Chemical mapping of a 170-nucleotide RNA with DMS and 2A3. The reactions ran in a buffer of 150 mM KOAc, 10 mM MgCl2 and 150 mM bicine (pH 8.5), at 24 C. For 2A3, 2,252 sequencing reads were counted.
RNA sequence: GGGAACGACUCGAGUAGAGUCGAAAAGUUUGGUACGAAUGUAUAAUUUGUUAGCAUGCCUUUGGCUUUUACGCAAGUUUUAUCAGCAUGUAAUCAAUGGUUGCAAAGAUACGGCAUGCUUGCUCUGCGACCUAGGCCUUCGGGCCUAGGAAAAGAAACAACAACAACAAC
Reactivity to DMS in 0.01 (KOAc 150mM, MgCl2 10mM, bicine 150mM(pH8.5), 24C), signal-to-noise 2, nucleotides 027 to 129: g020u030u030u000g040g070u020a050c090g010a130a070u020g030u110a070u010a110a080u050u030u000g040u100u010a100g080c000a040u020g000c000c000u000u020u080g040g000c000u000u000u000u000a090c180g060c090a050a100g030u000u020u080u000a100u000c130a110g070c040a010u030g020u010a060a060u010c170a130a160u050g000g000u060u060g000c020a030a090a150g000a000u000a080c220g030g020c030a000u030g020c060u000u110g090c000u010c050u020g000c110g000a110
Reactivity to 2A3 in 0.01 (KOAc 150mM, MgCl2 10mM, bicine 150mM(pH8.5), 24C), signal-to-noise 3, nucleotides 027 to 129: g070u000u060u090g010g000u010a000c020g030a020a140u030g130u070a000u040a190a220u040u080u120g060u050u020a000g000c040a000u020g030c050c070u100u020u130g050g000c000u080u180u040u050a020c050g000c050a050a060g000u000u030u070u150a170u110c010a030g050c100a070u130g030u080a030a090u090c170a120a150u080g060g000u000u070g030c060a000a090a000g040a070u080a050c010g000g000c000a000u020g020c000u000u000g000c000u000c020u000g010c000g000a070